[RMDB]
RNA sequence: GGGAACGACUCGAGUAGAGUCGAAAAGACGGUGGUCUACUCUCAUUAAGGCCAGAAACCAGAGAGAAUGAAUCAACUUCAAUCUCACUUAGGCAACUUGGCCACAAGUUACUCACCAAGGAUAAGCCGAGCGUGUAAUCUUCGGAUUACACGCUCGAAAAGAAACAACAACAACAAC
Reactivity to DMS in 0.01 (KOAc 150mM, MgCl2 10mM, bicine 150mM(pH8.5), 24C), signal-to-noise 1, nucleotides 027 to 126: g070a000c150g000g000u000g000g020u000c000u000a080c080u050c000u000c100a150u050u190a290a000g110g200c080c010a030g000a020a260a150c000c000a050g020a020g050a000g050a020a060u000g000a020a020u020c170a110a030c300u000u000c020a160a000u000c050u150c000a020c000u050u050a000g000g000c020a160a300c000u000u060g000g000c000c000a030c300a190a000g000u000u000a020c060u150c000a240c000c000a170a020g000g000a110u000a160a020g000c020
Reactivity to 2A3 in 0.01 (KOAc 150mM, MgCl2 10mM, bicine 150mM(pH8.5), 24C), signal-to-noise 3, nucleotides 027 to 126: g040a010c130g030g060u080g010g000u000c050u050a060c020u030c000u000c010a090u160u240a190a110g000g010c000c010a050g080a140a040a020c000c000a000g040a000g000a000g010a050a080u080g020a010a030u160c150a130a080c020u040u020c020a030a070u000c010u000c010a050c060u030u090a050g010g000c020a130a000c090u060u070g000g000c020c000a020c000a000a100g110u070u070a020c030u120c110a030c000c020a030a030g080g000a170u070a200a020g070c050